Description: This 177-nucleotide RNA was probed chemically with DMS and 2A3. For DMS, 4,649 sequencing reads were counted. The RNA was probed in 150 mM KOAc, 10 mM MgCl2 and 150 mM bicine (pH 8.5) at 24 C. DMS adducts were read by reverse transcription with MarathonRT.
[RMDB]
RNA sequence: GGGAACGACUCGAGUAGAGUCGAAAAGGGUAUCAGCAUAGCCUCUCCAUUCAUUGCGCUGUUAAUGCUUCUGACCUUGCAAUGCAGGACUUGAUGUUCAGUACUAGCAUUACGUUGCGGGCUAUGCCGUCGAACAGGUAUUCGUACCUGUUCGACGAAAAGAAACAACAACAACAAC
Reactivity to DMS in 0.01 (KOAc 150mM, MgCl2 10mM, bicine 150mM(pH8.5), 24C), signal-to-noise 4, nucleotides 027 to 126: g020g010g010u000a060u000c100a120g000c000a020u000a020g000c010c010u000c090u010c040c040a160u010u000c170a100u010u000g010c020g020c040u000g010u000u000a020a030u010g000c010u000u020c010u000g010a030c200c040u000u000g000c050a090a100u010g010c120a060g000g000a110c120u010u010g010a130u000g000u010u000c030a020g010u000a060c180u000a040g000c010a020u000u000a010c040g010u000u000g020c040g020g010g000c000u000a000u000g000c000
Reactivity to 2A3 in 0.01 (KOAc 150mM, MgCl2 10mM, bicine 150mM(pH8.5), 24C), signal-to-noise 4, nucleotides 027 to 126: g130g040g020u170a080u160c050a020g010c010a000u000a000g000c000c000u060c020u000c030c000a090u170u160c020a060u070u160g020c040g000c020u030g030u120u070a040a000u040g010c010u050u000c000u020g020a030c000c010u030u030g010c050a070a300u240g030c040a050g040g050a120c060u080u150g070a070u100g130u080u030c010a000g030u080a140c080u070a020g000c000a010u000u000a000c030g100u120u150g020c020g020g000g000c000u020a010u010g000c000